[RMDB]
RNA sequence: GGGAACGACUCGAGUAGAGUCGAAAAAUAACACUAGCAAUAUUCAUACUAUUAAUCCACAGCUCAGCAACCACAACUUUAUCCCUAUCCCAUACAUGAAACAAAAUACCCGUCAUCACAAGCCUAAUAAUAGUAACCCUACUCUCAAUAGGAGGCCGCCUAUUGAAAGGUUCGCCUUUCAAUAGGCAAAAGAAACAACAACAACAAC
Reactivity to 2A3 in 0.01 (KOAc 150mM, MgCl2 10mM, bicine 150mM(pH8.5), 24C), signal-to-noise 1, nucleotides 027 to 156: a000u080a010a030c050a010c070u080a000g000c040a180a080u060a110u300u090c050a060u040a140c010u040a050u220u070a100a070u080c060c020a060c030a030g010c010u000c060a020g000c000a020a010c020c010a000c030a120a110c030u150u050u100a080u030c020c000c000u010a000u050c000c010c010a050u090a060c040a060u100g050a040a060a020c020a040a080a060a000u070a030c000c010c000g030u020c020a070u020c000a080c010a080a000g040c020c020u000a030a020u040a020a010u010a090g070u070a030a040c000c000c000u020a100c020u000c000u020c010a080a050u030a060g070g040a040g050g020c030c080

The record gives the reactivity of an RNA of 207 nucleotides to 2A3. The reactions ran in a buffer of 150 mM KOAc, 10 mM MgCl2 and 150 mM bicine (pH 8.5), at 24 C. For 2A3 the reverse transcriptase was SuperScript II with manganese. The 2A3 profile rests on 746 reads.